[RMDB]
RNA sequence: GGGAACGACUCGAGUAGAGUCGAAAAGUAGUGCUCGAGAGGGAGGCUGACUCGCAGAGCUUUUAGAUCUUCUGAUCUUUCCCUCCUCCAUAUCGCUUAUGCGUCAAGCGAUAGACGCAUAAUUAAACCAUUUGUGAUUGUUCGCAAUCACAAAUGGAAAAGAAACAACAACAACAAC
Reactivity to 2A3 in 0.01 (KOAc 150mM, MgCl2 10mM, bicine 150mM(pH8.5), 24C), signal-to-noise 1, nucleotides 027 to 126: g040u060a000g050u020g120c050u030c090g090a080g020a050g020g080g000a010g060g000c120u060g020a070c000u000c060g000c100a030g010a000g060c000u000u030u000u010a010g000a000u010c030u250u090c150u300g010a010u010c000u010u000u010c000c000c010u030c000c000u010c000c000a060u080a050u110c050g000c050u000u000a000u020g010c000g000u010c030a030a090g140c070g150a070u080a090g010a000c020g000c000a000u030a030a010u020u150a100a070a030
Reactivity to DMS in 0.01 (KOAc 150mM, MgCl2 10mM, bicine 150mM(pH8.5), 24C), signal-to-noise 3, nucleotides 027 to 126: g010u010a070g010u000g010c060u000c070g000a080g020a300g000g010g000a040g010g000c080u000g010a120c040u000c030g010c070a130g000a170g000c010u000u000u000u000a030g010a020u000c010u010u000c270u010g000a030u000c000u000u000u010c010c000c000u000c020c000u000c000c010a100u000a070u000c030g000c230u000u000a000u010g010c020g010u000c000a070a110g010c160g010a090u010a050g010a010c030g000c000a010u000a020a040u010u010a040a070a090

This 177-nucleotide RNA was probed chemically with 2A3 and DMS.
Source: RMDB library M2PK90, as collected in RNAgym.
For 2A3, 2,234 sequencing reads were counted.
For DMS, 2,205 sequencing reads were counted.
The reactions ran in a buffer of 150 mM KOAc, 10 mM MgCl2 and 150 mM bicine (pH 8.5), at 24 C.